[RMDB]
RNA sequence: GGGAACGACUCGAGUAGAGUCGAAAAUGGGCUCUAGCUACGACGAUCGUUUUUUUUGAUCGUCGUGCACGUACGGCUCGAAGUGCACGAAGCCGAUGUAUUUUUUGUUGAGCUGUGGAGCCCGGAAGGGUUGGCGUCGCUUCGGCGGCGUCGGCCCAAAAGAAACAACAACAACAAC
Reactivity to 2A3 in 0.01 (KOAc 150mM, MgCl2 10mM, bicine 150mM(pH8.5), 24C), signal-to-noise 9, nucleotides 027 to 126: u110g000g000g000c000u020c020u030a030g020c070u120a020c010g000a000c000g000a010u000c050g090u030u000u010u000u010u020u110u300g000a000u000c000g000u000c000g000u000g000c000a010c040g130u130a030c010g010g000c000u000c010g010a060a020g050u060g040c020a010c040g080a140a070g140c140c040g040a130u010g030u040a090u020u110u030u020u070u070g230u130u140g020a010g000c010u010g040u070g040g000a000g000c000c010c010g000g010a120a080
Reactivity to DMS in 0.01 (KOAc 150mM, MgCl2 10mM, bicine 150mM(pH8.5), 24C), signal-to-noise 8, nucleotides 027 to 126: u050g000g000g000c000u000c000u010a070g010c050u030a020c010g010a010c010g000a010u000c000g000u000u000u000u030u030u040u040u020g000a000u000c000g010u000c000g020u000g010c010a110c160g020u030a060c000g010g010c000u000c010g010a040a030g020u010g010c050a040c030g010a210a100g010c140c050g000a110u000g010u010a000u010u010u010u020u020u030g000u010u010g010a030g010c000u000g010u010g000g000a020g000c000c000c000g010g010a110a090

Chemical mapping of a 177-nucleotide RNA with 2A3 and DMS. The RNA was probed in 150 mM KOAc, 10 mM MgCl2 and 150 mM bicine (pH 8.5) at 24 C. For 2A3 the reverse transcriptase was SuperScript II with manganese. The 2A3 profile rests on 24,306 reads.